[RMDB]
RNA sequence: GGGAACGACUCGAGUAGAGUCGAAAAGAUAUGGAUUCAAGCGAUGAGAUAUGGGUCGGAAACGACCCUAUCGAGCUUGAUCCUAAGUCAAAAGUACGAGGUUUGUCUUCGGACAAACCUCGUACAACACUAGUCCAUUGUUCGCAAUGGACUAGUGAAAAGAAACAACAACAACAAC
Reactivity to DMS in 0.01 (KOAc 150mM, MgCl2 10mM, bicine 150mM(pH8.5), 24C), signal-to-noise 4, nucleotides 027 to 126: g010a040u010a300u010g000g010a010u000u010c010a010a010g000c010g020a130u010g000a190g000a010u000a020u020g030g000g030u000c000g010g000a070a100a220c010g010a000c000c000c010u000a000u000c000g000a080g010c000u000u000g000a030u000c000c000u000a040a120g000u010c030a060a080a100a130g000u000a000c000g000a010g000g000u000u000u000g010u000c000u010u010c230g030g000a020c000a000a010a010c010c000u000c000g000u000a000c000a030a160
Reactivity to 2A3 in 0.01 (KOAc 150mM, MgCl2 10mM, bicine 150mM(pH8.5), 24C), signal-to-noise 2, nucleotides 027 to 126: g020a020u110a050u140g010g000a030u210u300c020a030a000g000c030g300a300u110g150a180g030a170u060a100u300g050g010g000u000c010g010g020a030a080a050c000g000a010c000c010c000u010a000u010c010g000a000g010c000u000u010g010a000u010c000c000u020a090a020g110u070c030a160a050a000a150g000u010a010c000g000a000g000g000u000u000u020g010u000c010u090u190c300g040g000a020c000a000a000a000c000c000u000c000g000u010a000c000a000a000